[RMDB]
RNA sequence: GGGAACGACUCGAGUAGAGUCGAAAAGACGGCCUUUUCGAAGGCUCGUCUGCUAGAAAAUUUUGCGCGCAGGUCCGACCAUCAACAUUCGGGCCCACUUUCCUCAGUGAAGGUGUCCCUGCGCAAAAACGACGAGGGUGUUCGCACCCUCGUCGUUAAAAGAAACAACAACAACAAC
Reactivity to 2A3 in 0.01 (KOAc 150mM, MgCl2 10mM, bicine 150mM(pH8.5), 24C), signal-to-noise 1, nucleotides 027 to 126: g020a000c010g000g000c010c000u030u000u020u140c280g050a010a000g000g000c000u040c020g000u000c010u000g000c030u000a010g290a080a230a100a070u030u000u000u040g000c000g020c000g000c100a020g000g010u000c000c040g000a030c130c000a140u190c120a110a170c010a040u000u050c040g000g000g010c000c000c010a000c000u010u000u060c000c000u200c080a150g000u300g300a000a000g000g000u010g000u020c000c000c000u020g000c000g080c000a000a000a160
Reactivity to DMS in 0.01 (KOAc 150mM, MgCl2 10mM, bicine 150mM(pH8.5), 24C), signal-to-noise 1, nucleotides 027 to 126: g070a000c000g000g000c000c020u000u020u020u150c170g050a000a000g020g020c010u070c000g020u000c020u000g000c220u000a070g010a040a010a060a130u000u010u000u040g000c000g000c020g010c300a060g000g030u010c000c000g000a000c300c030a160u040c300a090a040c210a260u020u000c010g000g000g000c000c000c000a000c000u020u000u000c000c060u040c220a180g010u070g000a000a000g020g000u000g000u000c000c000c010u000g040c010g000c000a000a000a120

This 177-nucleotide RNA was probed chemically with 2A3 and DMS. For DMS the reverse transcriptase was MarathonRT. The reactions ran in a buffer of 150 mM KOAc, 10 mM MgCl2 and 150 mM bicine (pH 8.5), at 24 C.